[RMDB]
RNA sequence: GGGAACGACUCGAGUAGAGUCGAAAAAGUGGUUACAAGGACUUGUAGUUGAUGGUCUAAUUGGUGGAGUUGGAGCAGUACUAGGAUUUGUACCACAAAUCAUGCUUUUAUUCUUAUUAUUAUCAAUAAAUAUUUACCGUUUCGACGGUAAAUAUUUAAAAGAAACAACAACAACAAC
Reactivity to DMS in 0.01 (KOAc 150mM, MgCl2 10mM, bicine 150mM(pH8.5), 24C), signal-to-noise 1, nucleotides 027 to 126: a050g030u020g000g010u010u000a000c040a020a040g000g010a260c090u030u010g000u060a030g030u030u020g040a200u000g010g000u010c000u000a010a030u030u040g030g000u030g030g000a120g010u040u010g050g000a040g000c030a010g010u010a020c090u000a070g000g000a180u010u000u000g010u000a020c050c080a060c000a050a020a120u010c130a050u000g000c080u010u040u000u000a030u010u030c030u030u030a070u070u030a160u060u050a240u040c000a120a300u060
Reactivity to 2A3 in 0.01 (KOAc 150mM, MgCl2 10mM, bicine 150mM(pH8.5), 24C), signal-to-noise 2, nucleotides 027 to 126: a010g090u070g020g010u200u070a010c010a020a020g000g010a000c000u010u000g030u030a010g060u020u180g070a120u020g050g150u020c010u040a060a070u030u090g120g030u100g070g060a030g010u010u050g040g010a010g100c000a010g030u020a000c010u000a000g060g030a040u000u000u010g000u030a030c010c000a000c010a020a030a010u030c070a040u070g040c060u100u180u100u210a170u260u090c010u040u000a300u000u120a200u090u160a130u000c030a020a100u000
Conditions: 150 mM KOAc, 10 mM MgCl2 and 150 mM bicine (pH 8.5), 24 C.
Structure probing data (DMS and 2A3) for a 177-nucleotide construct.
Reactivities are given for positions 27 through 126.